[RMDB]
RNA sequence: GGGAACGACUCGAGUAGAGUCGAAAAGGGCGCUUCUGCUACCCGAGCCGGCACGCGCGCUUCAUGAGCCGCUGCGCCAGGUCAGCUCCAUCCCCUUGGUGGCCAGCCAGCGGGUGAGGUCAUAGCCGGGAGGUAUAAGUUUCGACUUAUACCUCCCAAAAGAAACAACAACAACAAC
Reactivity to DMS in 0.01 (KOAc 150mM, MgCl2 10mM, bicine 150mM(pH8.5), 24C), signal-to-noise 3, nucleotides 027 to 126: g010g020g020c220g010c060u010u010c120u010g010c020u000a130c050c050c020g000a170g000c050c020g030g010c010a030c140g030c090g030c180g000c040u010u010c100a110u010g010a150g040c020c020g000c020u000g010c130g010c000c030a080g000g000u000c050a080g020c040u010c030c060a130u000c060c020c040c090u010u000g010g030u010g000g010c010c000a290g020c010c000a030g020c040g010g020g020u010g010a080g020g000u000c060a100u010a140g000c080c120
Reactivity to 2A3 in 0.01 (KOAc 150mM, MgCl2 10mM, bicine 150mM(pH8.5), 24C), signal-to-noise 1, nucleotides 027 to 126: g020g000g000c010g000c020u050u110c090u300g000c040u070a110c000c040c010g030a010g040c000c000g030g070c030a040c060g080c020g050c060g030c060u020u070c060a060u120g120a020g070c040c020g000c050u050g010c060g000c040c010a060g000g000u070c050a030g040c050u010c070c020a250u170c000c020c000c000u050u010g080g010u030g000g000c000c010a030g010c020c010a030g070c050g030g020g000u030g020a060g000g020u050c020a030u160a000g080c040c100
Notes
An RNA of 177 nucleotides, treated with DMS and 2A3 and read out base by base. DMS adducts were read by reverse transcription with MarathonRT. High DMS reactivity at an A or C suggests that its Watson-Crick edge is free. Conditions: 150 mM KOAc, 10 mM MgCl2 and 150 mM bicine (pH 8.5), 24 C. The DMS profile rests on 2,347 reads. For 2A3, 1,191 sequencing reads were counted.